[RMDB]
RNA sequence: GGGAACGACUCGAGUAGAGUCGAAAAGAUAUGGAUAUUGACUCGCGAUAAGCUCCCAUCGGAAACGAUGGAAGAGCUUUUGACGCGAGCAAUAUCCUAAGUCAAAACUAAUGGUUCGCCAUUAGAACUGAAGAAAAACGUUCGCGUUUUUCUUCAGAAAAGAAACAACAACAACAAC
Reactivity to 2A3 in 0.01 (KOAc 150mM, MgCl2 10mM, bicine 150mM(pH8.5), 24C), signal-to-noise 1, nucleotides 027 to 126: g040a000u060a030u080g010g000a000u010a000u070u110g130a300c010u000c010g070c020g110a180u070a300a000g000c010u000c040c010c010a000u020c030g000g030a040a020a000c030g000a020u020g050g000a110a120g000a010g040c020u110u010u050u110g190a110c130g000c000g000a000g020c000a000a000u000a000u000c000c010u030a040a000g000u040c000a000a000a180a110c000u000a000a020u030g060g000u090u050c300g060c040c000a020u030u000a030g050a140a140
Reactivity to DMS in 0.01 (KOAc 150mM, MgCl2 10mM, bicine 150mM(pH8.5), 24C), signal-to-noise 1, nucleotides 027 to 126: g010a030u000a130u010g010g010a030u000a010u000u000g010a290c000u000c000g030c000g010a140u010a020a050g010c000u000c000c000c000a000u000c000g010g000a080a070a050c000g020a010u000g000g000a150a100g000a010g000c010u000u030u000u010g010a260c080g030c000g000a000g010c010a020a010u000a010u000c000c000u020a030a040g010u000c010a130a160a060a210c010u020a000a020u000g020g010u000u020c290g010c000c000a030u000u030a010g010a140a300
Background
The record gives the reactivity of an RNA of 177 nucleotides to 2A3 and DMS. The DMS profile rests on 1,134 reads. For DMS the reverse transcriptase was MarathonRT. The reactions ran in a buffer of 150 mM KOAc, 10 mM MgCl2 and 150 mM bicine (pH 8.5), at 24 C. Values cover nucleotides 27 to 126. For 2A3 the reverse transcriptase was SuperScript II with manganese. It was measured as part of the RMDB library TTRDES. High DMS reactivity at an A or C suggests that its Watson-Crick edge is free.